[RMDB]
RNA sequence: GGGAACGACUCGAGUAGAGUCGAAAAGUGCGCUAUUUCGAUAGCGCACAAAGGCGGCGAGUCUCGCUCCGCGGCGCGCGACAGCGCGCAGCGCAGCCGGAACAUAACGCCACUUCGGUGGCGUUAACUACCGUUAAGUUUUCGAACUUAACGGUAGAAAAGAAACAACAACAACAAC
Reactivity to DMS in 0.01 (KOAc 150mM, MgCl2 10mM, bicine 150mM(pH8.5), 24C), signal-to-noise 4, nucleotides 027 to 126: g010u000g010c000g010c000u010a010u000u000u020c160g010a030u000a000g000c000g010c000a000c000a000a060a120g020g010c020g020g020c060g010a090g000u000c020u000c120g000c030u000c200c000g010c010g000g010c030g000c000g030c000g000a180c300a260g000c000g040c030g050c000a010g010c000g020c300a040g020c040c040g000g000a050a040c110a190u010a010a000c000g000c000c000a000c000u000u010c190g020g000u000g000g000c000g010u000u000a000a130
Reactivity to 2A3 in 0.01 (KOAc 150mM, MgCl2 10mM, bicine 150mM(pH8.5), 24C), signal-to-noise 2, nucleotides 027 to 126: g010u000g000c000g000c000u000a020u020u090u050c070g100a010u000a000g010c000g000c000a010c000a000a000a000g040g010c020g020g020c050g030a030g050u010c030u030c140g010c010u040c060c000g020c010g010g000c030g050c010g000c020g180a140c110a270g030c000g000c020g000c020a010g000c010g010c000a010g040c020c050g060g040a070a020c030a070u080a010a000c000g000c010c000a000c000u060u080c230g060g010u010g000g000c010g000u010u000a010a000

This 177-nucleotide RNA was probed chemically with DMS and 2A3. For DMS, 4,014 sequencing reads were counted. It was measured as part of the RMDB library M2PK50. The reactions ran in a buffer of 150 mM KOAc, 10 mM MgCl2 and 150 mM bicine (pH 8.5), at 24 C.